Conditions: 150 mM KOAc, 10 mM MgCl2 and 150 mM bicine (pH 8.5), 24 C. The record gives the reactivity of an RNA of 177 nucleotides to 2A3 and DMS.
RNA sequence: GGGAACGACUCGAGUAGAGUCGAAAACUGCACACAUGUGCAUGUACCUGCACUCAUAGUCAUGUGUGGUGCACACGUAAAUCACCUCUUGUUUUGAGUAUGGAAGGUCCUUCUUUGUCCAACGCCAGCGUUUACGUAGAUUCGUCUACGUAAACGCAAAAGAAACAACAACAACAAC
Reactivity to 2A3 in 0.01 (KOAc 150mM, MgCl2 10mM, bicine 150mM(pH8.5), 24C), signal-to-noise 3, nucleotides 027 to 126: c020u020g000c000a010c000a020c020a100u300g000u000g000c010a010u050g020u030a090c020c020u040g080c040a020c020u060c010a070u050a100g110u080c060a140u140g050u000g040u030g070g020u050g020c030a040c000a000c040g100u100a070a060a060u100c030a060c010c020u070c040u080u090g100u040u150u050u080g040a000g040u060a060u150g090g000a070a040g000g020u010c010c000u060u090c020u080u110u030g050u020c030c000a070a000c060g030c050c000a020
Reactivity to DMS in 0.01 (KOAc 150mM, MgCl2 10mM, bicine 150mM(pH8.5), 24C), signal-to-noise 3, nucleotides 027 to 126: c080u000g000c010a020c010a170c150a130u020g010u000g030c020a020u010g010u010a150c030c010u010g020c060a020c040u000c060a090u000a060g020u000c120a070u010g020u010g020u010g020g020u000g030c110a080c130a060c180g000u000a060a070a140u010c060a080c060c020u010c020u000u000g000u000u000u010u010g000a060g010u000a090u000g000g020a070a020g000g000u010c020c040u020u000c080u000u000u010g010u000c050c020a060a090c140g000c070c060a120
Reactivities are given for positions 27 through 126.